[RMDB]
RNA sequence: GGGAACGACUCGAGUAGAGUCGAAAAAAAAAGAUAUGGACCAGGUCCUACGAUGAAAGUGCAACUAUACAUGUCGGAAACGACAUGUACGAAUUGCACUGGAGUAGGCCUGGUCCUAAGUCAAAAACUAUCACUAUAGGUUCGCCUAUAGUGAUAGAAAAGAAACAACAACAACAAC
Reactivity to 2A3 in 0.01 (KOAc 150mM, MgCl2 10mM, bicine 150mM(pH8.5), 24C), signal-to-noise 5, nucleotides 027 to 126: a000a000a000a000a000g010a030u020a020u030g000g000a000c000c000a000g000g130u300c010c010u010a020c010g300a300u020g010a010a000a010g000u010g000c000a010a000c120u010a000u010a010c000a000u000g000u000c010g000g000a020a010a000c010g000a000c000a000u000g010u000a010c000g000a300a300u000u000g020c000a000c000u010g000g000a000g010u010a000g000g010c000c010u000g000g000u000c000c000u010a000a000g010u000c000a010a010a000a030a090
Reactivity to DMS in 0.01 (KOAc 150mM, MgCl2 10mM, bicine 150mM(pH8.5), 24C), signal-to-noise 5, nucleotides 027 to 126: a030a050a060a090a070g000a010u000a010u010g000g000a020c000c000a010g000g000u020c010c000u000a000c000g000a130u010g000a080a120a030g000u000g000c000a010a010c170u000a300u000a000c000a000u000g000u000c000g000g000a000a000a010c000g000a010c000a000u000g010u000a000c020g010a010a010u000u000g000c000a000c000u000g000g000a010g020u000a010g000g000c000c000u000g000g000u000c000c000u000a000a030g000u010c000a080a080a090a100a120